[RMDB]
RNA sequence: GGGAACGACUCGAGUAGAGUCGAAAAUCGCCCGGAGUCUUCUCGACCAGCGCAGGUUCUGACGCGACCGGUGGCAUCACCGAGUUGCUCAAGCCUCAACCGCCUUUUUCUCUAUUCUGCGCUUGGUCUCCGGGCGAGGGUGUUUAGCCCUUGGAACCCUCGUCUUAUGGUUCGCCAUAAGACGAGGAAAAGAAACAACAACAACAAC
Reactivity to 2A3 in 0.01 (KOAc 150mM, MgCl2 10mM, bicine 150mM(pH8.5), 24C), signal-to-noise 1, nucleotides 027 to 156: u070c020g000c010c010c000g010g000a000g070u110c110u070u050c050u120c040g080a020c000c000a000g040c010g000c000a010g050g000u090u110c100u150g000a010c130g010c010g030a010c000c000g000g000u040g050g150c090a180u300c000a140c000c000g040a120g080u010u080g000c000u020c010a000a030g000c010c000u070c130a120a150c020c040g130c070c030u100u140u060u190u150c080u100c010u100a230u300u030c010u070g000c000g020c030u050u110g000g010u010c000u000c010c000g010g000g010c000g000a000g010g000g000u020g060u070u210u300a040g070c000c000c060u010u030g070g000a070a050c000
Source: RMDB library VIROID, as collected in RNAgym. Chemical mapping of a 207-nucleotide RNA with 2A3.